About this RNA: An RNA of 207 nucleotides, treated with 2A3 and read out base by base. For 2A3, 655 sequencing reads were counted. It was measured as part of the RMDB library OK3TST.

RNA sequence: GGGAACGACUCGAGUAGAGUCGAAAACUCAAUCACUACGGUGAUUGAGAAUGCUUACGCCUCAAUGAAGCUUGAUUUGAGUGCCUCCAGCAGAUAUAGACUGAAACAUUUAGUAUGGUCAAGCAGGGAGCAACAGCUCGAGUACGCUCGAGCUGAACUGAUGCACUCGAUUCGUCGAGUGCAUCAGAAAAGAAACAACAACAACAAC
Reactivity to 2A3 in 0.01 (KOAc 150mM, MgCl2 10mM, bicine 150mM(pH8.5), 24C), signal-to-noise 1, nucleotides 027 to 156: c000u000c000a010a010u010c000a000c000u020a030c230g060g000u000g000a010u000u000g000a000g070a030a030u020g000c010u020u010a040c010g030c000c000u000c010a060a140u100g050a110a020g090c080u090u080g000a060u080u050u080g000a010g020u110g010c020c000u040c030c010a020g000c010a020g140a120u050a050u060a140g190a010c030u020g050a060a220a000c000a020u040u240u040a050g020u030a080u180g000g000u050c000a010a000g040c040a050g040g080g000a060g030c020a070a020c010a000g000c000u000c000g050a030g000u070a040c190g030c090u000c000g010a010g000c010u000g000a000a010